An RNA of 177 nucleotides, treated with 2A3 and DMS and read out base by base. 2A3 adducts were read by reverse transcription with SuperScript II with manganese. For DMS, 105,874 sequencing reads were counted. The 2A3 profile rests on 193,526 reads. For DMS the reverse transcriptase was MarathonRT.
RNA sequence: GGGAACGACUCGAGUAGAGUCGAAAAGAUGAGACUCAAGCUGUACGCGAAUUGCAGCGUUAGUUCGACUACUGACGCUUGAAUACGUGUAUUCAAGGUGUAGUUGUCGAACUACACCGGUCUCAGAGAUAGGUGAGUAGUUCGCUGCUUAUCUAUCAAAAGAAACAACAACAACAAC
Reactivity to 2A3 in 0.01 (KOAc 150mM, MgCl2 10mM, bicine 150mM(pH8.5), 24C), signal-to-noise 9, nucleotides 027 to 126: g130a070u060g000a000g000a000c010u020c170a030a020g000c020u010g020u030a020c050g060c060g190a110a150u150u020g020c000a000g000c010g010u020u020a000g000u000u030c010g020a010c010u050a000c000u030g090a010c010g030c190u010u030g020a000a000u030a030c100g120u160g030u140a010u010u010c010a020a010g080g030u060g040u060a000g000u000u020g030u030c030g010a000a000c000u000a000c010a020c000c040g010g000u000c000u000c010a010g010a000
Reactivity to DMS in 0.01 (KOAc 150mM, MgCl2 10mM, bicine 150mM(pH8.5), 24C), signal-to-noise 9, nucleotides 027 to 126: g010a130u010g010a010g000a010c000u010c180a110a150g010c040u000g010u000a010c060g010c240g010a130a160u030u010g000c000a020g000c000g020u020u000a000g010u000u000c090g000a040c040u000a020c000u010g010a020c020g010c000u000u000g010a010a000u000a020c040g030u020g010u000a010u000u000c010a020a010g010g010u020g030u010a020g010u000u000g000u010c060g010a010a010c000u000a010c130a060c100c180g000g010u000c000u000c010a030g000a140